[RMDB]
RNA sequence: GGGAACGACUCGAGUAGAGUCGAAAAACGGGUAUUCGCUGCGCGGUGACCUCGACGGGAUGCCGGCGUGGCUCGGCGAAGUGCUCGCGUCGGCGUACCCGUCGCGCUCGAUCGAGGGGGAGUGGAAACACAAGUGCUCGGUCGGGCACACGCACCCCUUAUAAUCACGGUUCGCCGUGAUUAUAAGAAAAGAAACAACAACAACAAC
Reactivity to 2A3 in 0.01 (KOAc 150mM, MgCl2 10mM, bicine 150mM(pH8.5), 24C), signal-to-noise 5, nucleotides 027 to 156: a000c050g010g010g020u090a150u120u160c080g010c160u140g020c040g030c040g090g050u080g070a110c020c010u020c030g010a010c000g030g000g000a010u080g010c010c010g020g020c030g000u040g020g000c020u010c040g200g110c180g090a280a030g070u050g040c120u160c160g000c010g020u030c020g010g000c020g000u040a080c000c010c000g000u000c000g000c010g000c000u000c000g000a000u010c000g000a000g030g100g010g000g000a070g010u020g000g020a020a060a020c000a000c010a030a030g040u080g130c000u000c000g010g010u000c000g000g000g010c010a000c000a000c010g000c010a060c000c010c000
Reactivity to DMS in 0.01 (KOAc 150mM, MgCl2 10mM, bicine 150mM(pH8.5), 24C), signal-to-noise 2, nucleotides 027 to 156: a050c050g000g020g030u000a110u000u020c040g030c030u000g000c020g020c000g030g000u020g010a110c050c040u000c020g010a000c020g000g020g000a160u000g000c010c000g040g010c020g020u010g020g030c020u000c020g020g030c110g040a110a210g020u020g020c000u000c040g000c000g040u000c030g020g020c000g020u000a040c000c010c020g000u010c000g010c060g030c000u000c020g020a070u000c000g000a100g000g020g020g030g010a300g030u020g030g020a210a110a180c030a030c030a070a300g000u000g000c010u000c060g000g000u000c000g000g000g040c010a010c020a040c000g000c030a100c020c010c020
Structure probing data (2A3 and DMS) for a 207-nucleotide construct.
Source: RMDB library OK3TST, as collected in RNAgym.
Conditions: 150 mM KOAc, 10 mM MgCl2 and 150 mM bicine (pH 8.5), 24 C.
For DMS, 3,796 sequencing reads were counted.